[RMDB]
RNA sequence: GGGAACGACUCGAGUAGAGUCGAAAAAUUGUUCAAAUAUGGCCUCAGUGUCUUCUUCAAAUAUUUCCUCUGUCCUGGUGCAUAAGGUGCAACUUGCCUUAGAAUUUUGUUUGCACAAGCUACUGUCAUUGACGAACAACUGGUCAACCCCUGGAGAGCUAUGCCAGGUAUUCGUACCUGGCAUAGCAAAAGAAACAACAACAACAAC
Reactivity to 2A3 in 0.01 (KOAc 150mM, MgCl2 10mM, bicine 150mM(pH8.5), 24C), signal-to-noise 1, nucleotides 027 to 156: a000u180u070g010u050u050c060a080a100a020u160a050u090g020g000c030c000u030c020a040g030u000g030u050c000u040u010c000u140u040c020a160a170a060u150a150u010u070u120c010c010u060c040u020g010u000c010c010u020g020g000u040g030c020a040u060a180a040g070g010u000g010c000a030a070c030u050u100g010c010c020u040u020a010g060a190a140u090u070u030u030g070u010u010u110g000c020a000c000a040a070g230c030u100a060c040u070g040u080c010a060u030u070g020a010c010g020a010a010c000a010a010c070u000g020g020u020c010a030a060c000c000c000c020u020g060g040a120g030a010